[RMDB]
RNA sequence: GGGAACGACUCGAGUAGAGUCGAAAAUCACUGCAUCAUGGUGGUGGCGUUGGUAUGGGCUUCUCGCAACAUUCGGGCAUGGUAGUGGUAUGUGAUGGUAGCGACGAUGCAGCCGAACGUAUCGCCCUAAGUCCUAAACUUUCGAGUUUAGGACUUAAAAAGAAACAACAACAACAAC
Reactivity to DMS in 0.01 (KOAc 150mM, MgCl2 10mM, bicine 150mM(pH8.5), 24C), signal-to-noise 9, nucleotides 027 to 126: u010c040a110c050u000g010c060a060u010c110a100u000g010g030u010g000g020u000g010g000c070g010u000u000g010g020u010a070u010g010g000g010c050u000u000c030u000c050g000c090a070a080c110a130u000u000c080g010g010g010c060a070u000g010g010u000a070g010u000g010g010u000a040u000g010u000g000a110u010g010g010u000a110g010c040g010a090c150g000a060u010g000c020a240g010c050c040g000a060a050c090g010u000a050u010c090g000c000c010c030
Reactivity to 2A3 in 0.01 (KOAc 150mM, MgCl2 10mM, bicine 150mM(pH8.5), 24C), signal-to-noise 4, nucleotides 027 to 126: u060c000a000c010u030g020c000a040u050c010a030u180g060g030u010g040g000u020g040g000c020g050u030u130g030g040u130a200u150g030g050g020c000u060u030c020u020c040g030c010a030a110c010a110u100u200c040g000g020g020c060a050u060g080g030u070a050g030u020g130g030u110a080u070g040u020g040a100u120g020g060u040a030g040c010g060a050c070g010a030u160g000c010a000g040c030c060g010a020a000c020g030u070a030u090c020g050c000c000c000